An RNA of 177 nucleotides, treated with 2A3 and read out base by base. The RNA was probed in 150 mM KOAc, 10 mM MgCl2 and 150 mM bicine (pH 8.5) at 24 C. It was measured as part of the RMDB library OK1LIB. 2A3 adducts were read by reverse transcription with SuperScript II with manganese. Values cover nucleotides 27 to 126.

RNA sequence: GGGAACGACUCGAGUAGAGUCGAAAACAUGAACUGACCACUGCUGCACUGCUUUUUGCCUAUGCAAUUGGCAGAUCGUCUGAGCUGGAGCAGAGAUUCGUGCUUAACGGGAAGAAGUUCACCAAGGUCUGCGUCCCCUCUUCGGAGGGGACGCAGAAAAAGAAACAACAACAACAAC
Reactivity to 2A3 in 0.01 (KOAc 150mM, MgCl2 10mM, bicine 150mM(pH8.5), 24C), signal-to-noise 1, nucleotides 027 to 126: c090a160u050g050a000a090c000u040g000a000c050c050a040c140u080g000c000u080g030c000a000c000u000g090c070u000u030u030u030u030g000c000c050u270a260u220g000c240a040a270u110u000g080g000c000a000g010a050u040c010g300u140c030u040g080a000g060c030u070g060g000a070g030c090a000g000a000g000a260u160u080c090g090u200g050c070u090u130a150a000c010g070g000g000a110a000g040a040a000g000u000u030c010a040c070c000a000a000g200g000